[RMDB]
RNA sequence: GGGAACGACUCGAGUAGAGUCGAAAAUCAUGUUUAUUCGUAAACAUGAAACGCCGCACGGCGCGCCUGGCCUCCAGGGAACGUGGAUAUGGAAGCCUGAGAAUGAGGUGCCGUUCGCGGCACCUAAUGUUACCGAUCAUUUCGAUGAUCGGUAACAAAAAGAAACAACAACAACAAC
Reactivity to 2A3 in 0.01 (KOAc 150mM, MgCl2 10mM, bicine 150mM(pH8.5), 24C), signal-to-noise 1, nucleotides 027 to 126: u030c000a010u000g020u010u020u000a060u000u090c240g000u060a000a000a000c010a000u010g000a070a010a040c090g070c020c000g100c060a030c080g000g000c000g030c000g080c010c010u040g010g000c010c000u010c000c030a010g000g030g050a060a030c090g170u240g090g060a120u060a040u170g020g040a010a050g010c030c010u110g040a110g090a200a130u230g030a030g010g000u020g000c000c000g030u030u040c120g000c040g000g000c000a000c000c000u000a050a050
Reactivity to DMS in 0.01 (KOAc 150mM, MgCl2 10mM, bicine 150mM(pH8.5), 24C), signal-to-noise 1, nucleotides 027 to 126: u000c000a000u010g000u000u000u000a020u000u010c160g060u000a000a000a000c040a000u000g000a020a160a130c120g000c050c010g000c200a110c080g000g040c000g020c130g000c040c010u010g010g010c010c020u010c040c010a040g000g000g000a040a120c170g030u010g010g010a150u000a090u000g000g000a050a080g000c000c010u020g000a160g010a100a090u010g010a080g010g020u000g000c010c000g000u000u020c130g000c010g010g030c000a040c000c000u020a030a100

An RNA of 177 nucleotides, treated with 2A3 and DMS and read out base by base.
The RNA was probed in 150 mM KOAc, 10 mM MgCl2 and 150 mM bicine (pH 8.5) at 24 C.
DMS adducts were read by reverse transcription with MarathonRT.